[RMDB]
RNA sequence: GGGAACGACUCGAGUAGAGUCGAAAAGCAAAGGUGUGUGGACCAGACAGCAGGAGCGGCAUGCGCAAUGCAUCGCCGUGCAGGUGCCGCAAUGACCGCCCGCGAGUUGGGCGCCGUUCUGGCUGCGCUCAUCUGUGUAAUUCGUUACACAGAUGAGAAAAGAAACAACAACAACAAC
Reactivity to 2A3 in 0.01 (KOAc 150mM, MgCl2 10mM, bicine 150mM(pH8.5), 24C), signal-to-noise 6, nucleotides 027 to 126: g070c050a080a070a070g110g010u080g010u040g010u050g090g050a160c020c010a030g070a100c030a020g040c030a040g030g060a070g020c000g000g000c010a020u040g010c020g010c130a120a130u270g000c010a020u050c110g020c040c030g010u020g000c020a010g030g090u040g030c040c020g080c050a010a060u100g060a070c030c010g010c020c010c000g030c060g040a110g080u180u100g020g000g010c020g000c000c020g020u080u030c020u050g050g000c030u040g020c050g010
Reactivity to DMS in 0.01 (KOAc 150mM, MgCl2 10mM, bicine 150mM(pH8.5), 24C), signal-to-noise 9, nucleotides 027 to 126: g010c080a060a090a080g010g010u000g010u000g030u000g000g010a120c040c040a050g010a140c070a090g010c030a110g010g010a140g010c010g000g010c010a030u000g010c040g010c140a080a060u010g010c010a020u000c170g020c090c070g000u000g000c080a070g010g020u000g000c050c040g010c050a040a050u010g000a140c160c040g000c020c020c020g020c080g000a130g010u010u000g010g010g010c020g010c030c030g010u000u000c030u010g000g010c020u000g000c090g000
Notes: Structure probing data (2A3 and DMS) for a 177-nucleotide construct. Conditions: 150 mM KOAc, 10 mM MgCl2 and 150 mM bicine (pH 8.5), 24 C. DMS adducts were read by reverse transcription with MarathonRT. DMS (dimethyl sulfate) methylates the pairing face of unpaired adenines and cytosines. The data come from the RNA Mapping Database (RMDB), library OK2TRN.